RNA sequence: GGGAACGACUCGAGUAGAGUCGAAAAGUAGUUAUAGCAUCAAUAUGAUGACAUUAUUUAGAGGGAACAAUAGUAUACUCUUUUUCUGUUCCAAUGAAAGGCUGUCUGGCCUACCCCAGAUCACUUUGUAUUUGGGUAUAAUACAUUUCAGAAGACAAGUGCGCAAAAUAUUCGUAUUUUGCGCACUAAAAGAAACAACAACAACAAC
Reactivity to DMS in 0.01 (KOAc 150mM, MgCl2 10mM, bicine 150mM(pH8.5), 24C), signal-to-noise 2, nucleotides 027 to 156: g010u010a070g010u010u000a040u000a060g000c030a050u000c040a120a210u000a130u000g010a050u000g000a090c060a070u000u000a070u000u000u000a060g000a080g030g030g030a120a160c060a040a160u000a080g020u000a060u000a070c030u010c010u010u000u000u000u000c060u030g030u030u000c030c010a050a060u000g010a090a050a080g010g050c030u010g040u000c040u010g020g030c030c030u000a100c190c130c000c010a040g020a040u000c140a100c040u010u010u020g020u000a070u000u000u000g050g000g020u000a030u010a030a120u000a090c060a190u000u020u000c040a130g010a090a130g000a100c120a100
Reactivity to 2A3 in 0.01 (KOAc 150mM, MgCl2 10mM, bicine 150mM(pH8.5), 24C), signal-to-noise 3, nucleotides 027 to 156: g080u100a010g020u070u110a090u060a110g030c000a020u010c030a000a300u140a110u300g010a010u010g020a050c040a040u040u140a080u060u130u090a080g020a120g020g030g040a070a000c030a100a040u080a030g040u040a070u080a140c040u060c000u040u130u020u060u040c070u030g030u030u010c020c000a000a020u080g050a090a040a000g010g010c030u010g050u130c050u040g030g000c010c010u010a020c010c000c010c000a000g000a020u040c000a010c130u150u160u180g020u110a020u010u010u010g030g010g000u010a000u030a010a020u090a010c040a010u030u090u170c040a030g060a150a000g020a050c030a040

Structure probing data (DMS and 2A3) for a 207-nucleotide construct. Reactivities are given for positions 27 through 156. Conditions: 150 mM KOAc, 10 mM MgCl2 and 150 mM bicine (pH 8.5), 24 C. 2A3 adducts were read by reverse transcription with SuperScript II with manganese. The data come from the RNA Mapping Database (RMDB), library OK3TST.